Conditions: 150 mM KOAc, 10 mM MgCl2 and 150 mM bicine (pH 8.5), 24 C. The record gives the reactivity of an RNA of 207 nucleotides to 2A3. For 2A3, 1,290 sequencing reads were counted.

[RMDB]
RNA sequence: GGGAACGACUCGAGUAGAGUCGAAAAGGGGUCCCUUGUCUCUAGCGUGGAGCGAUGAAGUUGCGGUAGCUCUGAAGCCUCCACGGAGCUAUAAUCGCAAUGGAGCUCUCGGGCAAGGGACGGAGGCACCCAAAACGGUACGUUUCGACGUACCGAACAUGGUCUGGGGUUUCGACCCCAGACCAUGAAAAGAAACAACAACAACAAC
Reactivity to 2A3 in 0.01 (KOAc 150mM, MgCl2 10mM, bicine 150mM(pH8.5), 24C), signal-to-noise 2, nucleotides 027 to 156: g070g010g020g020u020c010c010c000u000u000g020u000c020u000c020u100a190g080c130g300u300g090g000a020g040c030g250a300u030g010a060a030g010u000u000g000c020g000g030u010a000g000c000u000c000u000g000a030a000g000c000c000u000c000c000a020c000g000g000a000g000c000u060a070u080a300a030u080c000g010c000a000a000u020g010g000a000g000c000u000c000u020c060g000g000g000c000a000a000g000g000g000a000c020g000g000a000g000g000c000a040c000c000c000a000a070a040a060c020g000g000u000a000c000g000u040u040u170c270g170a020c000g000u000a000c000c000g000a060a030